[RMDB]
RNA sequence: GGGAACGACUCGAGUAGAGUCGAAAAGUAGGAGACGUUACACAGGUACGUGCGCUAGCACGCCACCGAGUCACACAUGAAACACUACCCGUCAGUGACUGUGACCCUCACUCCGGGAGGAGGACACCCCCACUCAGAUAUUCGUAUCUGAGUGGGGAAAAGAAACAACAACAACAAC
Reactivity to DMS in 0.01 (KOAc 150mM, MgCl2 10mM, bicine 150mM(pH8.5), 24C), signal-to-noise 4, nucleotides 027 to 126: g040u020a070g030g000a090g010a020c050g010u070u020a020c020a030c030a030g000g000u000a060c010g030u010g000c010g050c180u050a120g000c010a030c010g010c020c040a010c030c000g030a060g050u020c010a140c100a120c080a080u010g000a180a080a030c110a060c050u000a090c000c020c010g000u010c090a080g000u000g000a110c060u000g000u020g000a160c020c030c030u000c070a080c020u010c040c030g000g040g020a220g010g010a040g000g010a060c130a080c150
Reactivity to 2A3 in 0.01 (KOAc 150mM, MgCl2 10mM, bicine 150mM(pH8.5), 24C), signal-to-noise 6, nucleotides 027 to 126: g150u140a050g010g140a080g000a050c020g000u020u050a000c040a000c000a010g000g010u020a010c000g000u010g000c020g010c110u040a050g000c010a000c010g020c020c000a010c000c010g010a000g000u010c020a010c000a010c010a100u120g090a050a070a010c060a020c040u100a090c020c010c000g060u060c060a030g010u020g060a040c030u100g030u110g140a110c010c000c010u060c040a070c010u000c000c010g070g040g010a050g030g020a010g020g010a010c000a050c020